[RMDB]
RNA sequence: GGGAACGACUCGAGUAGAGUCGAAAAGCGUCCGGCAAACGGCUGGGACAUUACCGCCCGCGGCUGGCUUCCUUCGCUGCCGCAGCUCGGCGCCUCGCUGGGCUUUGAGCGCUACUACGGUGAAGAGAUGGUCUAGGCUAUUCGUAGCCUAGACCAUAAAAGAAACAACAACAACAAC
Reactivity to DMS in 0.01 (KOAc 150mM, MgCl2 10mM, bicine 150mM(pH8.5), 24C), signal-to-noise 1, nucleotides 027 to 126: g010c040g030u030c000c030g000g060c090a090a110a260c120g000g030c000u000g010g000g000a040c240a140u030u020a090c060c020g050c080c000c100g000c170g000g000c000u040g010g000c050u020u000c040c000u000u000c150g000c070u000g030c040c080g030c090a000g000c020u040c070g000g020c050g020c240c030u090c110g000c050u000g000g000g000c020u000u000u130g040a060g010c020g030c110u000a050c020u030a070c090g010g000u010g020a110a120g010a180g000
Reactivity to 2A3 in 0.01 (KOAc 150mM, MgCl2 10mM, bicine 150mM(pH8.5), 24C), signal-to-noise 2, nucleotides 027 to 126: g070c010g030u060c030c000g000g030c050a110a160a160c070g140g020c020u190g080g010g020a000c000a020u040u250a070c050c020g000c020c020c060g010c000g020g000c070u030g060g030c000u090u110c020c050u000u040c040g010c040u050g030c000c000g000c000a010g010c000u050c020g010g000c050g120c110c030u140c060g030c040u130g000g000g000c000u040u040u120g000a010g000c000g000c060u060a040c040u010a020c100g070g000u150g020a060a070g020a030g020
Structure probing data (DMS and 2A3) for a 177-nucleotide construct.
The RNA was probed in 150 mM KOAc, 10 mM MgCl2 and 150 mM bicine (pH 8.5) at 24 C.
High 2A3 reactivity points to a flexible backbone, as in loops and unpaired stretches.
It was measured as part of the RMDB library OK1LIB.